[RMDB]
RNA sequence: GGGAACGACUCGAGUAGAGUCGAAAAGCUUGUAGCUUCGGCUACAAGCAUCUAAAAUCAGCGGUAAAUAAUUACGAGGCGUUACCGCUGAACGCGUCGAUACAACCACAUCAUUCGUGAUGUGGAAGGAUGGUAAUAUCUUCGGAUAUUACCAUCCAAAAGAAACAACAACAACAAC
Reactivity to 2A3 in 0.01 (KOAc 150mM, MgCl2 10mM, bicine 150mM(pH8.5), 24C), signal-to-noise 5, nucleotides 027 to 126: g000c000u000u000g000u010a000g000c000u030u040c280g110g000c000u000a000c000a010a000g000c010a000u000c010u040a060a070a030a120u020c000a000g000c000g070g050u080a020a070a080u120a090a170u240u200a120c150g050a060g120g000c060g030u010u010a050c000c000g000c000u000g000a000a000c010g020c010g110u110c040g030a030u040a240c070a050a040c040c000a010c000a000u000c000a010u000u130c190g090u030g000a000u000g010u010g010g000a000a010
Reactivity to DMS in 0.01 (KOAc 150mM, MgCl2 10mM, bicine 150mM(pH8.5), 24C), signal-to-noise 5, nucleotides 027 to 126: g000c000u010u000g020u000a000g010c000u000u020c200g030g020c000u000a020c000a000a000g020c010a020u010c030u000a060a080a090a130u000c010a000g010c000g000g000u000a020a060a060u010a090a100u010u010a140c160g000a090g010g020c140g010u000u000a040c010c010g010c000u000g000a010a050c080g010c060g000u000c050g010a130u010a070c160a100a180c000c000a010c000a000u000c000a040u000u000c190g000u000g000a000u000g010u000g000g010a020a050